[RMDB]
RNA sequence: GGGAACGACUCGAGUAGAGUCGAAAAGAAAAGAAAGCUAUCCUAGUCGAAAGACUAGGCUCGAAAGAGCGAUAGCCGGAUGUCGAUCUGCUCCAAGACAUCCGGAGCAGAAAAAGAAAAAGAAAAAGGGUAACAGUAUGUUCGCAUACUGUUACCCAAAAGAAACAACAACAACAAC
Reactivity to DMS in 0.01 (KOAc 150mM, MgCl2 10mM, bicine 150mM(pH8.5), 24C), signal-to-noise 2, nucleotides 027 to 126: g010a030a060a150a060g010a150a200a210g020c000u000a030u000c290c110u020a000g000u000c000g020a070a110a170g000a010c000u000a000g000g060c030u030c020g050a050a050a160g000a000g010c000g000a090u000a000g000c010c000g000g030a110u050g070u030c060g050a130u000c050u000g030c090u000c030c020a110a300g020a110c140a080u030c140c080g000g000a000g030c000a010g000a000a050a070a110a010g000a090a190a020a100a180g020a060a090a160a010a050
Reactivity to 2A3 in 0.01 (KOAc 150mM, MgCl2 10mM, bicine 150mM(pH8.5), 24C), signal-to-noise 2, nucleotides 027 to 126: g010a000a080a010a000g090a050a070a000g020c000u020a020u060c010c000u020a000g020u000c010g050a100a000a000g010a010c000u000a000g000g000c000u000c000g100a110a060a020g050a000g000c080g020a020u060a000g000c030c050g010g000a040u030g020u080c000g070a080u000c020u070g060c020u000c020c000a000a140g120a080c030a060u000c010c030g000g000a000g010c010a010g040a020a060a000a000a000g120a010a080a010a020a000g150a010a060a000a000a020